[RMDB]
RNA sequence: GGGAACGACUCGAGUAGAGUCGAAAAAGGAGUCCUUUCGAGGACUCCUACUAGUGGCGCCGACCACUUAAAAACAACGGCCAAACAAAAAUGUCAGCAUAAAACGCCUAGCUUUCGAGCUAGGCAACACUAAUGUCGGAUUCGUCCGACAUUAGUGAAAAGAAACAACAACAACAAC
Reactivity to 2A3 in 0.01 (KOAc 150mM, MgCl2 10mM, bicine 150mM(pH8.5), 24C), signal-to-noise 1, nucleotides 027 to 126: a020g050g020a010g000u000c000c050u000u070u130c180g110a010g000g000a000c000u000c000c000u000a010c000u020a000g020u000g000g030c020g030c020c000g160a300c000c030a020c000u110u140a030a040a000a030a070c120a060a000c010g050g000c150c010a000a140a030c010a040a090a100a050a020u140g120u280c160a000g060c080a290u180a160a140a070a050c170g000c000c000u000a000g020c020u140u010u130c270g060a020g000c020u000a000g080g000c000a010a000
Reactivity to DMS in 0.01 (KOAc 150mM, MgCl2 10mM, bicine 150mM(pH8.5), 24C), signal-to-noise 2, nucleotides 027 to 126: a210g000g010a020g010u000c000c000u000u000u000c160g020a010g030g000a000c000u000c010c000u000a010c010u010a010g020u000g000g000c000g000c020c000g000a130c000c000a010c010u020u000a000a010a000a020a000c140a000a020c020g010g010c080c300a090a110a150c070a020a070a070a160a020u010g000u010c120a120g000c120a060u000a070a070a080a100c170g000c000c000u000a000g000c000u000u000u000c120g000a050g020c000u000a000g000g000c000a000a000